[RMDB]
RNA sequence: GGGAACGACUCGAGUAGAGUCGAAAAAGUGCGCACCAGGAGGCCCUGCUCAUGGGAGGGGCGGUGACUGGGUCCCCUCACGCCAUGCAGCCGCGACCUGACGCCCUCCGAGUAGGGACCCAAAGCUUAGGACCAUCUGAGUCAGUCCGAGAGCGGACAAAUUAGGUUCGUUCGCGAACCUAAUUUGAAAAGAAACAACAACAACAAC
Reactivity to DMS in 0.01 (KOAc 150mM, MgCl2 10mM, bicine 150mM(pH8.5), 24C), signal-to-noise 1, nucleotides 027 to 156: a090g010u020g010c010g030c030a070c070c040a140g040g000a110g000g010c010c010c020u000g020c050u000c000a140u000g050g010g020a050g000g040g050g010c060g020g030u000g020a100c090u000g010g030g000u000c010c010c010c010u000c110a080c040g070c050c060a080u010g060c070a110g010c020c020g030c060g020a070c030c000u010g000a160c050g030c010c020c000u010c030c050g000a040g000u000a020g000g000g020a030c000c000c000a080a090a110g020c040u000u010a290g000g010a040c050c030a180u010c100u000g000a200g000u000c100a140g000u000c030c020g020a160g000a090g020c000g020g010a130
Reactivity to 2A3 in 0.01 (KOAc 150mM, MgCl2 10mM, bicine 150mM(pH8.5), 24C), signal-to-noise 2, nucleotides 027 to 156: a000g170u100g010c060g020c050a060c090c040a070g070g040a040g070g020c010c000c010u000g000c000u020c020a070u200g030g050g010a060g000g020g080g110c040g000g040u130g040a090c080u120g030g000g040u060c040c020c010c010u030c020a070c040g080c030c010a080u140g030c060a020g030c030c030g040c070g060a070c000c030u040g050a030c030g110c010c000c000u010c020c010g000a000g000u010a000g020g040g010a010c030c010c000a040a000a000g000c000u020u050a020g010g000a010c020c000a060u070c090u140g040a040g080u070c080a020g010u000c030c040g080a110g010a000g120c020g000g040a050
The record gives the reactivity of an RNA of 207 nucleotides to DMS and 2A3. 2A3 adducts were read by reverse transcription with SuperScript II with manganese. Conditions: 150 mM KOAc, 10 mM MgCl2 and 150 mM bicine (pH 8.5), 24 C. For 2A3, 1,073 sequencing reads were counted. For DMS the reverse transcriptase was MarathonRT.